[RMDB]
RNA sequence: GGGAACGACUCGAGUAGAGUCGAAAAUGAUCUACUGCACGAAUUUAUGUACGGAAAUCAUGCAAAACAUGUCUCCUACUGUUGUCGUAGAGGAGGAAACAGAUAGGGACGGGAAUGUCAUCACGACCAAAGAGCCCGGCGAUUUCGUCGUAUGCAAGGCUCUGGAGAACUUCGGUUCUCCAGAGCCAAAAGAAACAACAACAACAAC
Reactivity to 2A3 in 0.01 (KOAc 150mM, MgCl2 10mM, bicine 150mM(pH8.5), 24C), signal-to-noise 3, nucleotides 027 to 156: u090g010a010u010c020u120a060c020u060g040c030a030c080g040a150a070u090u150u040a130u230g040u040a030c080g020g030a030a070a000u060c020a030u070g020c080a050a060a030a040c040a060u160g010u010c050u040c100c000u010a010c000u010g030u060u030g100u030c050g010u090a040g010a060g110g020a060g000g060a040a020a010c010a000g040a070u020a020g020g010g010a010c060g030g010g020a070a050u090g020u040c000a010u070c040a030c080g040a040c010c010a000a070a010g070a010g020c010c060c000g060g000c010g030a030u000u060u040c020g000u000c010g000u030a010u050g060c030a040a170
Reactivity to DMS in 0.01 (KOAc 150mM, MgCl2 10mM, bicine 150mM(pH8.5), 24C), signal-to-noise 1, nucleotides 027 to 156: u000g000a100u000c000u000a150c000u000g020c020a020c030g010a040a150u000u000u000a080u030g030u020a020c080g020g020a040a070a030u000c020a050u000g010c120a090a050a050a300c030a200u000g010u000c000u000c010c020u000a140c100u000g020u010u000g000u000c020g000u000a110g020a160g000g060a230g020g000a060a060a060c030a020g020a190u000a000g000g000g020a050c040g010g010g010a040a150u000g020u010c050a120u020c000a110c010g020a040c000c020a030a050a090g020a130g020c000c030c060g020g010c050g000a150u000u000u010c040g080u000c000g010u000a090u000g000c160a080a190

Notes:
Structure probing data (2A3 and DMS) for a 207-nucleotide construct. For 2A3, 1,688 sequencing reads were counted. Source: RMDB library OK3TST, as collected in RNAgym. Conditions: 150 mM KOAc, 10 mM MgCl2 and 150 mM bicine (pH 8.5), 24 C. Values cover nucleotides 27 to 156.